RNA sequence: GGGAACGACUCGAGUAGAGUCGAAAAACAGAAACAGGUGUCGAUGAUGCUUACCCAAUCCAAGUUAAACUUGGAUCUGGCCUUAGCUUUGACAGUACAGGAGCCAUAAUGGCUGGUAACAAAGAAGACGAUAAACUCACUUUGUGGACAACACCUGCAAAUAGCUACCCUUCGGGGUAGCUAUUUGAAAAGAAACAACAACAACAAC
Reactivity to DMS in 0.01 (KOAc 150mM, MgCl2 10mM, bicine 150mM(pH8.5), 24C), signal-to-noise 2, nucleotides 027 to 156: a130c050a200g020a190a140a170c000a060g030g040u000g040u000c030g030a140u000g000a070u000g010c000u020u000a090c070c000c030a080a100u010c000c000a010a050g000u010u000a050a060a300c000u010u020g000g000a000u000c060u000g050g050c030c020u000u000a060g000c010u000u000u010g020a180c060a120g010u040a130c060a100g000g000a020g010c010c000a120u000a070a110u000g030g020c000u000g050g000u040a030a100c040a000a060a110g030a030a060g010a080c040g010a080u000a070a050a040c020u000c020a090c020u000u000u020g020u000g010g010a030c050a020a020c030a000c010c020u000g000
Reactivity to 2A3 in 0.01 (KOAc 150mM, MgCl2 10mM, bicine 150mM(pH8.5), 24C), signal-to-noise 3, nucleotides 027 to 156: a000c040a040g150a060a090a010c010a010g030g030u010g030u050c070g030a080u130g000a030u110g100c030u040u060a030c000c000c030a000a000u000c000c000a010a000g030u100u210a300a180a190c010u000u000g000g000a000u010c090u020g010g000c000c040u080u090a030g010c010u120u060u100g090a060c080a020g020u080a020c030a060g000g100a010g000c010c010a060u140a250a060u300g010g000c010u010g020g020u040a020a020c030a030a030a010g080a070a010g040a020c100g010a010u110a130a120a070c030u010c030a030c030u090u030u050g010u020g020g050a000c000a030a000c010a040c000c000u010g000